An RNA of 170 nucleotides, treated with DMS and 2A3 and read out base by base. DMS adducts were read by reverse transcription with MarathonRT. The reactions ran in a buffer of 150 mM KOAc, 10 mM MgCl2 and 150 mM bicine (pH 8.5), at 24 C. For 2A3, 48,659 sequencing reads were counted.
RNA sequence: GGGAACGACUCGAGUAGAGUCGAAAACCUGGACUCCUCGGCUCUGGAGUCCUCCGACCCGUGAGGUCGAGGAUCCCCGCGCAGGGAGGCAGCCACCAGGAGAAAGCGGAGAAGUCACCUCCAGAGAUAAGACAGAAGUUCGCUUCUGUCAAAAGAAACAACAACAACAAC
Reactivity to DMS in 0.01 (KOAc 150mM, MgCl2 10mM, bicine 150mM(pH8.5), 24C), signal-to-noise 9, nucleotides 027 to 129: c010c000u010g010g010a160c030u000c000c020u000c070g020g010c030u010c010u040g020g000a060g020u010c020c000u010c080c060g000a030c020c020c050g060u030g000a160g010g000u000c000g000a050g010g000a060u010c040c030c020c030g020c200g000c050a080g030g030g030a040g000g050c100a040g000c040c070a060c020c040a040g010g020a110g020a050a090a090g050c050g020g010a030g010a060a100g030u030c070a110c050c010u010c010c030a100g000a080g000a110u020a080a110
Reactivity to 2A3 in 0.01 (KOAc 150mM, MgCl2 10mM, bicine 150mM(pH8.5), 24C), signal-to-noise 9, nucleotides 027 to 129: c000c000u010g010g020a090c020u010c010c010u030c060g060g010c020u000c030u060g000g000a030g030u020c000c000u000c020c060g000a010c000c000c030g290u220g100a170g020g010u010c000g000a010g000g000a030u060c020c010c000c000g000c010g000c030a040g120g080g010a010g010g010c020a000g040c030c020a070c010c010a010g020g020a030g060a040a060a000g080c040g030g010a040g010a100a020g080u100c030a040c060c010u000c020c010a010g020a010g010a080u190a140a040